Source: RMDB library OK1LIB, as collected in RNAgym. Structure probing data (DMS and 2A3) for a 177-nucleotide construct. DMS adducts were read by reverse transcription with MarathonRT.
[RMDB]
RNA sequence: GGGAACGACUCGAGUAGAGUCGAAAAGCGCGGAUUGCGUAAGCCGUCCGCCGACGUGUUGAGCCAGAUCGCAAAGGCGCUGCGGGUCUCGGCCGAAGUCCUUUAUGUGCGCGCCGGGAUUCUCGAGCUUUCACGAUAAGUUCGCUUAUCGUGAAAGAAAAGAAACAACAACAACAAC
Reactivity to DMS in 0.01 (KOAc 150mM, MgCl2 10mM, bicine 150mM(pH8.5), 24C), signal-to-noise 4, nucleotides 027 to 126: g010c160g020c000g030g000a030u000u010g010c010g000u060a130a120g020c000c050g000u000c000c000g000c030c040g010a090c140g010u020g000u000u020g020a120g000c000c040a110g010a110u030c070g010c100a080a110a130g000g010c050g010c040u010g020c060g020g000g020u010c010u000c040g020g020c010c040g000a090a150g010u010c050c050u010u030u050a080u070g030u050g000c030g000c060g010c000c000g020g000g000a020u000u010c000u000c040g020a140g000
Reactivity to 2A3 in 0.01 (KOAc 150mM, MgCl2 10mM, bicine 150mM(pH8.5), 24C), signal-to-noise 6, nucleotides 027 to 126: g100c090g000c000g000g040a040u020u090g010c020g070u180a090a080g000c010c010g000u020c010c000g000c020c010g020a040c060g080u130g060u100u110g000a010g010c030c020a050g020a180u150c030g000c080a090a110a070g060g020c010g010c050u090g010c020g010g030g030u020c020u020c000g010g010c020c000g030a090a020g130u120c020c010u100u250u100a200u280g150u110g050c050g010c010g010c010c010g000g010g000a070u070u050c040u040c040g020a040g060